RNA sequence: GGGAACGACUCGAGUAGAGUCGAAAAGCUUCGUAGAGCUUGUUAAACUCACGAUUGCCUUGCUGCACAAGGAUGGUUCCGUUAACAGGCACAAUAGUCAUGGCUCGGCACUCCAGGCUGAUUAAGGCAAAGCGUGCAAUUUCGAUUGCACGCUUUGAAAAGAAACAACAACAACAAC
Reactivity to 2A3 in 0.01 (KOAc 150mM, MgCl2 10mM, bicine 150mM(pH8.5), 24C), signal-to-noise 2, nucleotides 027 to 126: g000c030u060u060c050g080u110a090g000a020g070c010u020u010g040u010u200a080a060a000c010u000c000a020c030g030a030u000u160g010c020c000u010u020g000c040u050g000c030a060c050a150a060g030g000a020u070g000g080u110u020c040c020g000u020u050a070a020c020a030g000g020c000a020c030a100a200u140a080g030u000c020a080u040g010g000c030u040c020g020g050c010a000c060u000c020c000a010g070g000c000u020g030a150u140u040a080a000g070g000
Reactivity to DMS in 0.01 (KOAc 150mM, MgCl2 10mM, bicine 150mM(pH8.5), 24C), signal-to-noise 4, nucleotides 027 to 126: g030c040u000u000c090g020u010a110g010a060g010c020u000u010g020u010u010a060a100a100c030u000c040a050c040g000a100u000u000g010c000c010u000u000g000c040u000g000c080a190c090a070a070g000g000a080u000g010g020u000u010c020c010g010u000u010a070a100c080a060g010g000c030a050c100a070a070u000a100g000u000c070a060u000g010g000c080u000c070g010g000c060a070c060u000c010c040a090g020g010c040u000g000a130u010u010a070a060g000g010
This 177-nucleotide RNA was probed chemically with 2A3 and DMS. The reactions ran in a buffer of 150 mM KOAc, 10 mM MgCl2 and 150 mM bicine (pH 8.5), at 24 C. For DMS, 3,893 sequencing reads were counted. For 2A3 the reverse transcriptase was SuperScript II with manganese. It was measured as part of the RMDB library OK2TST.